RNA sequence: GGGAACGACUCGAGUAGAGUCGAAAAGAUAUGGAUUACGACAUGCUAGUGAUUCGGAAACGAAUCCCUAGCAACAGCGUACGGUCCUAAGUCAAAAGUGUAUCAGUUCUUCGGAACUGAUACACAACAUUUUGCAAGCCUUCGGGCUUGCAAAAUGAAAAGAAACAACAACAACAAC
Reactivity to DMS in 0.01 (KOAc 150mM, MgCl2 10mM, bicine 150mM(pH8.5), 24C), signal-to-noise 2, nucleotides 027 to 126: g010a140u030a250u010g000g010a000u010u000a030c010g010a030c080a220u000g020c000u020a000g000u000g000a030u010u000c000g010g000a050a020a230c000g030a010a000u000c000c110c010u000a010g010c000a010a000c270a190g010c040g010u000a010c300g000g000u010c000c010u010a050a050g010u000c030a050a030a090a090g010u000g010u000a000u030c000a000g010u000u020c000u000u000c180g010g000a010a010c000u000g010a000u000a010c000a000c000a060a120

Structure probing data (DMS) for a 177-nucleotide construct. For DMS, 866 sequencing reads were counted. It was measured as part of the RMDB library TTRDEL. The RNA was probed in 150 mM KOAc, 10 mM MgCl2 and 150 mM bicine (pH 8.5) at 24 C. Values cover nucleotides 27 to 126.